Structure probing data (2A3 and DMS) for a 177-nucleotide construct.

RNA sequence: GGGAACGACUCGAGUAGAGUCGAAAAGAGUGAGUACUCAUACGCUUGAAAUCGAGUGUAGUAUACUAGUAGCGUCCAGUAAGUUGGAGUGUCCUGAUCCAAUUCAGGCUAAACAUUACAUAAUGGCACAUCCUUCCAAAUUCGUUUGGAAGGAUGUAAAAGAAACAACAACAACAAC
Reactivity to 2A3 in 0.01 (KOAc 150mM, MgCl2 10mM, bicine 150mM(pH8.5), 24C), signal-to-noise 5, nucleotides 027 to 126: g070a010g050u130g040a040g050u040a020c020u020c050a070u020a050c000g030c020u070u010g120a200a100a050u300c040g000a020g000u040g010u030a020g050u010a060u040a090c070u010a020g080u060a000g040c000g080u000c030c010a030g030u080a100a060g040u080u020g040g020a060g030u030g020u090c000c000u010g020a020u030c090c130a010a000u090u020c000a010g010g000c010u050a100a020a000c020a100u060u050a010c010a030u200a100a100u070g100g000c010
Reactivity to DMS in 0.01 (KOAc 150mM, MgCl2 10mM, bicine 150mM(pH8.5), 24C), signal-to-noise 8, nucleotides 027 to 126: g000a060g020u040g010a080g010u010a030c050u010c060a140u000a060c020g000c000u010u010g000a140a120a140u030c070g020a040g000u000g020u010a020g000u020a110u030a050c040u000a060g020u020a080g010c090g000u010c010c020a080g000u010a050a090g010u000u000g010g000a150g010u000g010u020c000c000u010g010a040u010c160c200a080a110u030u010c020a020g000g010c250u000a050a060a060c050a030u010u010a080c130a080u040a030a060u000g000g000c240
For 2A3, 2,679 sequencing reads were counted.
For 2A3 the reverse transcriptase was SuperScript II with manganese.